[RMDB]
RNA sequence: GGGAACGACUCGAGUAGAGUCGAAAAUGGCUUGUACGCUCUUGGAGCGGCACGAUAUUGCCACCGGCGCUACCGGCCGCAAUCAUGGCUUAUUACACAGUGGCGCGCGUUAUGCUGUGACUGAUGGCUCAGUUCCAUCGUUCGCGAUGGAACUGAGAAAAGAAACAACAACAACAAC
Reactivity to 2A3 in 0.01 (KOAc 150mM, MgCl2 10mM, bicine 150mM(pH8.5), 24C), signal-to-noise 1, nucleotides 027 to 126: u030g000g000c020u050u040g030u060a030c100g000c000u020c010u110u140g070g000a070g040c050g020g000c020a000c090g100a120u080a190u160u150g020c000c010a050c050c010g070g000c010g010c020u010a030c050c000g020g000c010c000g050c020a080a080u120c060a040u030g000g000c000u040u100a000u040u090a220c040a000c070a010g010u050g010g000c000g090c080g000c000g010u050u020a090u100g020c050u000g010u010g080a030c070u050g040a070u100g160g000
Reactivity to DMS in 0.01 (KOAc 150mM, MgCl2 10mM, bicine 150mM(pH8.5), 24C), signal-to-noise 1, nucleotides 027 to 126: u000g010g000c030u020u000g030u000a080c100g020c000u000c040u030u020g020g010a090g010c040g010g010c070a000c140g010a100u000a040u020u010g000c010c020a100c050c010g020g020c050g010c080u020a020c020c100g000g020c020c040g000c080a050a060u000c120a060u000g020g000c050u030u000a070u000u010a080c100a050c110a100g020u000g000g010c020g000c170g030c040g000u000u000a040u020g010c030u000g020u000g000a130c030u000g000a080u020g000g000
Chemical mapping of a 177-nucleotide RNA with 2A3 and DMS. Values are in units of 0.01, from 0 to 300, in steps of 10. Source: RMDB library OK2TRN, as collected in RNAgym.